[RMDB]
RNA sequence: GGGAACGACUCGAGUAGAGUCGAAAAAAAAAGAUAUGGACUUACAUAGCCUUGGAUUUAUACAGCGACGUGGUCGGAAACGACCACCAAGCUGUAUUGUCAGGCUGGGUAAGUCCUAAGUCAAAAACACCAUAAAAAACUUCGGUUUUUUAUGGUGAAAAGAAACAACAACAACAAC
Reactivity to DMS in 0.01 (KOAc 150mM, MgCl2 10mM, bicine 150mM(pH8.5), 24C), signal-to-noise 2, nucleotides 027 to 126: a040a050a060a080a100g010a060u000a300u000g010g000a020c000u000u000a000c010a050u020a000g020c000c010u010u000g030g000a020u000u010u010a000u010a010c000a010g020c000g020a300c300g000u000g000g010u010c000g020g030a130a100a160c000g000a000c000c010a000c000c020a080a300g000c000u010g000u000a000u000u000g010u000c020a030g000g040c010u000g000g000g010u000a000a000g020u000c010c000u000a000a020g010u020c030a040a120a130a110a110